[RMDB]
RNA sequence: GGGAACGACUCGAGUAGAGUCGAAAAUGAAUACAGCACACUGAUGGGUCUUGACUCUUUAUCCAAUUUUCCAGUCUGUGUCUUUUAAUUGGAGCAUUUAGUCCAUUUACAUUUAAAGUUAAUAUCGUUAUGUGUGAAUUUGGUCCUGUCAUUAUGAGUCAACCUGAGUAUUCGUACUCAGGUUGACAAAAGAAACAACAACAACAAC
Reactivity to 2A3 in 0.01 (KOAc 150mM, MgCl2 10mM, bicine 150mM(pH8.5), 24C), signal-to-noise 2, nucleotides 027 to 156: u180g040a060a060u150a100c040a020g010c050a030c030a050c140u070g020a020u060g040g000g000u000c010u030u090g070a060c020u020c010u090u100u080a060u020c050c000a060a100u010u000u140u040c050c010a030g060u060c130u070g030u010g140u070c040u040u140u030u150a030a060u030u020g000g020a030g030c110a040u060u070u110a020g060u000c030c000a000u000u000u080a020c010a000u040u100u050a050a100a040g010u000u110a100a040u130a110u190c060g040u030u040a040u110g000u000g000u000g000a020a070u060u030u070g000g000u000c000c020u040g010u030c010a040u010u270a040u220g020a000
Reactivity to DMS in 0.01 (KOAc 150mM, MgCl2 10mM, bicine 150mM(pH8.5), 24C), signal-to-noise 1, nucleotides 027 to 156: u010g010a130a090u000a080c070a130g060c060a060c030a120c080u000g030a110u000g010g020g000u030c020u000u000g000a100c030u000c040u000u010u000a130u000c020c020a030a070u000u010u030u000c030c020a110g060u010c050u010g000u010g000u000c000u020u020u000u000a040a070u000u000g010g010a100g020c110a070u000u000u000a050g030u010c020c130a110u010u000u000a030c020a030u010u000u000a050a080a060g020u000u020a030a150u000a140u010c020g020u000u000a030u000g020u000g030u030g000a030a050u000u010u000g070g030u010c070c010u000g020u000c060a130u010u020a130u020g010a280
An RNA of 207 nucleotides, treated with 2A3 and DMS and read out base by base. For 2A3, 852 sequencing reads were counted. Values cover nucleotides 27 to 156. The reactions ran in a buffer of 150 mM KOAc, 10 mM MgCl2 and 150 mM bicine (pH 8.5), at 24 C. For 2A3 the reverse transcriptase was SuperScript II with manganese. For DMS the reverse transcriptase was MarathonRT. For DMS, 2,151 sequencing reads were counted.